This 207-nucleotide RNA was probed chemically with 2A3 and DMS. DMS adducts were read by reverse transcription with MarathonRT. The 2A3 profile rests on 5,153 reads. The DMS profile rests on 6,005 reads. 2A3 adducts were read by reverse transcription with SuperScript II with manganese. The data come from the RNA Mapping Database (RMDB), library PKBHTP.
RNA sequence: GGGAACGACUCGAGUAGAGUCGAAAAGAGGCAGGUUCGCCUGCCUCGUGAUGCAAAAAUGUGAUCUUGCUUGUAAAUACAAUUUUGAGAGGUUAAUAAAUUACAAGUAGUGCUAUUUUUGUCCCUCUCUGCUGCUGUGCGUGAUUCGUCACGCAAAGUACUCAAUAACCUUCGGGUUAUUGAGUACAAAAGAAACAACAACAACAAC
Reactivity to 2A3 in 0.01 (KOAc 150mM, MgCl2 10mM, bicine 150mM(pH8.5), 24C), signal-to-noise 7, nucleotides 027 to 156: g000a000g000g020c010a000g000g040u050u160c170g070c040c010u000g010c010c000u000c000g000u050g010a050u110g000c040a020a010a010a020a020u220g150u070g300a300u090c050u040u070g010c000u010u010g010u030a010a060a040u220a110c100a100a190u070u090u160u170g070a080g000a010g010g050u080u080a070a030u070a110a230a070u070u020a010c010a000a010g000u040a020g120u050g110c010u030a040u010u050u000u020u030g040u070c020c010c000u000c000u030c020u050g110c040u040g010c030u110g050u040g130c010g010u010g000a020u020u100c190g040u010c100a000c000g000c000a010a010a000
Reactivity to DMS in 0.01 (KOAc 150mM, MgCl2 10mM, bicine 150mM(pH8.5), 24C), signal-to-noise 2, nucleotides 027 to 156: g000a030g060g110c010a010g020g000u000u000c300g020c000c000u010g020c010c010u000c000g010u010g020a100u010g020c030a010a070a030a050a050u000g030u000g010a140u000c040u000u010g010c010u000u010g000u020a010a010a120u010a210c160a050a130u000u000u000u010g000a190g010a110g010g040u000u000a050a070u010a070a140a160u000u000a030c010a010a050g000u010a040g040u000g040c070u000a040u000u000u000u000u000g000u000c080c000c010u000c000u000c040u000g030c030u000g000c020u000g010u000g010c020g060u000g000a100u000u000c300g020u000c020a020c000g030c010a030a040a170